[RMDB]
Source: RMDB library M2RFPK, as collected in RNAgym. Chemical mapping of a 207-nucleotide RNA with 2A3 and DMS. The RNA was probed in 150 mM KOAc, 10 mM MgCl2 and 150 mM bicine (pH 8.5) at 24 C.
RNA sequence: GGGAACGACUCGAGUAGAGUCGAAAAGAUUAAUAACCUGCGCUGAGCCCUUCUCCCCCAGCUUGCCUGUGUCCUAGGGAAUUGGAAGGUCAUCCUUCACAGGAUCGUGUGGAAGUCCUGCUCGGGGUCCAAACAUGGUAAUUCGUUACCAUGUUAAUCAUUUGAUGAUCUUCGGAUCAUCAAAUGAAAAAGAAACAACAACAACAAC
Reactivity to 2A3 in 0.01 (KOAc 150mM, MgCl2 10mM, bicine 150mM(pH8.5), 24C), signal-to-noise 1, nucleotides 027 to 156: g010a000u160u220a020a140u060a030a150c040c000u040g060c010g000c080u110g120a060g030c000c000c050u000u130c100u120c000c020c010c010c000a010g000c010u010u140g030c000c010u060g010u010g020u080c010c030u020a040g020g000g110a070a070u110u090g040g060a040a040g000g000u030c020a040u060c000c010u060u030c050a010c000a080g000g060a100u060c070g040u050g010u020g160g000a010a050g000u010c000c010u020g000c000u030c010g030g000g010g020u040c010c000a050a050a000c000a000u000g010g000u010a010a010u060u020c020g020u000u000a000c000c000a000u000g000u000u010a010a010
Reactivity to DMS in 0.01 (KOAc 150mM, MgCl2 10mM, bicine 150mM(pH8.5), 24C), signal-to-noise 2, nucleotides 027 to 156: g000a150u010u010a090a140u020a050a090c040c010u000g000c040g030c040u010g000a100g000c060c010c040u010u000c070u010c030c000c000c020c020a150g020c040u010u000g000c040c000u010g010u010g020u000c060c030u010a110g010g030g010a090a080u010u010g020g020a040a080g070g000u010c050a100u000c060c040u000u000c070a060c040a060g000g000a060u000c100g010u010g030u000g020g020a090a100g010u000c030c020u000g020c030u000c040g050g020g040g020u000c030c070a110a030a020c000a010u000g000g010u000a010a050u010u010c260g010u000u010a000c000c010a000u000g000u000u000a030a160
For DMS the reverse transcriptase was MarathonRT.